[RMDB]
RNA sequence: GGGAACGACUCGAGUAGAGUCGAAAAGCAGAUAUUCUAGACUCAAGACCUCAUAUGUCAGCCACAAACUCACAGCAGCAAAAUGUUUAUUUUCAAAACUAAUAAGACUGUUGAAUGAAAAGUGGCAGUUGCUGCCUAAACUGUGGAAUUGCCUACACCCUAUUUACCGGUUCGCCGGUAAAUAGGGAAAAGAAACAACAACAACAAC
Reactivity to 2A3 in 0.01 (KOAc 150mM, MgCl2 10mM, bicine 150mM(pH8.5), 24C), signal-to-noise 2, nucleotides 027 to 156: g060c060a020g020a060u050a050u170u030c060u070a040g030a030c010u040c070a030a060g030a120c030c020u080c080a080u130a110u200g050u060c010a010g030c040c010a000c010a020a090a000c050u100c080a000c000a010g020c000a000g000c010a030a020a080a110u080g020u050u100u120a200u060u090u110u120c010a000a080a110a020c110u110a080a190u170a240a050g010a090c040u040g010u080u060g090a120a290u000g000a010a000a020a060g060u100g020g000c000a000g000u000u040g030c010u000g010c010c000u010a090a110a060c030u010g010u080g020g060a120a140u120u160g060c050c000u120a050c030a110
Chemical mapping of a 207-nucleotide RNA with 2A3. 2A3 adducts were read by reverse transcription with SuperScript II with manganese.